An RNA of 177 nucleotides, treated with 2A3 and DMS and read out base by base. The RNA was probed in 150 mM KOAc, 10 mM MgCl2 and 150 mM bicine (pH 8.5) at 24 C.

RNA sequence: GGGAACGACUCGAGUAGAGUCGAAAAUCGGCUUGUCCAAACUGGCCCGGCUGGUGGACGGUUACGCCGCACGGCUGCAGGUACAAGAGCGCAUCGGACAGCAAGCGGUGGACGGAAUAAUGCGCAGCGGGAUUACUCAUUUCGAUGAGUAAUCCCGAAAAGAAACAACAACAACAAC
Reactivity to 2A3 in 0.01 (KOAc 150mM, MgCl2 10mM, bicine 150mM(pH8.5), 24C), signal-to-noise 5, nucleotides 027 to 126: u090c020g030g010c040u080u110g010u030c010c030a090a060a080c060u060g060g000c000c050c000g070g030c030u050g020g110u060g030g030a040c030g000g020u170u080a050c060g000c010c000g000c020a030c040g020g000c010u020g010c060a060g030g020u110a090c060a150a040g040a030g060c010g000c010a050u080c040g050g040a070c020a020g030c050a060a050g040c020g040g010u090g030g020a060c050g040g060a110a060u200a110a040u070g010c030g000c020a020g040
Reactivity to DMS in 0.01 (KOAc 150mM, MgCl2 10mM, bicine 150mM(pH8.5), 24C), signal-to-noise 3, nucleotides 027 to 126: u030c050g020g000c030u020u010g030u030c030c000a010a100a160c120u010g000g020c020c010c070g010g000c030u030g080g010u040g000g000a150c030g010g000u000u020a080c120g020c010c010g010c120a070c130g000g020c020u000g030c090a100g010g030u030a100c100a090a100g010a140g000c020g010c020a000u010c060g000g000a100c070a120g000c040a070a060g010c020g020g000u020g030g000a050c050g000g010a080a070u030a090a030u030g010c020g010c040a160g010
Source information:
The 2A3 profile rests on 4,699 reads. For 2A3 the reverse transcriptase was SuperScript II with manganese. Reactivities are rounded to 0.1 and cut off at 0 and 3.